[RMDB]
RNA sequence: GGGAACGACUCGAGUAGAGUCGAAAAGGGAUGCGUAUAAGUAGGCUACGUCCGUCCGUCGGAUCCCCGUGAAUGGAUCUUGGGCAACGAUUCCUUCGCCGUUCACUAGGUGGCGCUUCGAGAGUACCGCAGUCUAAGUGUUCGCACUUAGACUGCGAAAAGAAACAACAACAACAAC
Reactivity to DMS in 0.01 (KOAc 150mM, MgCl2 10mM, bicine 150mM(pH8.5), 24C), signal-to-noise 2, nucleotides 027 to 126: g000g080g000a000u000g000c090g000u000a100u040a140a140g000u030a060g000g050c100u030a060c010g000u010c020c020g000u010c020c040g000u040c030g010g000a020u000c050c000c060c140g030u010g020a100a020u000g030g000a040u010c040u000u060g000g060g020c020a130a050c280g000a160u000u000c000c060u010u000c090g000c000c020g000u020u000c020a060c060u020a220g000g020u000g000g040c080g020c010u030u010c060g050a110g000a200g030u000a030c080
Reactivity to 2A3 in 0.01 (KOAc 150mM, MgCl2 10mM, bicine 150mM(pH8.5), 24C), signal-to-noise 4, nucleotides 027 to 126: g100g000g020a050u120g120c070g050u100a080u030a140a130g110u120a030g030g110c070u080a040c040g040u000c030c010g000u020c010c000g030u070c010g000g040a140u110c010c000c000c040g100u110g020a030a060u100g020g010a040u010c000u000u090g010g030g020c050a110a080c090g110a160u030u100c000c000u030u000c010g020c010c000g020u080u050c010a030c060u020a060g070g050u070g050g060c110g000c000u030u080c040g090a110g000a000g080u030a030c010
Structure probing data (DMS and 2A3) for a 177-nucleotide construct. For DMS the reverse transcriptase was MarathonRT. 2A3 adducts were read by reverse transcription with SuperScript II with manganese. The reactions ran in a buffer of 150 mM KOAc, 10 mM MgCl2 and 150 mM bicine (pH 8.5), at 24 C. The DMS profile rests on 1,887 reads. The 2A3 profile rests on 1,951 reads. Reactivities are given for positions 27 through 126. It was measured as part of the RMDB library OK1LIB.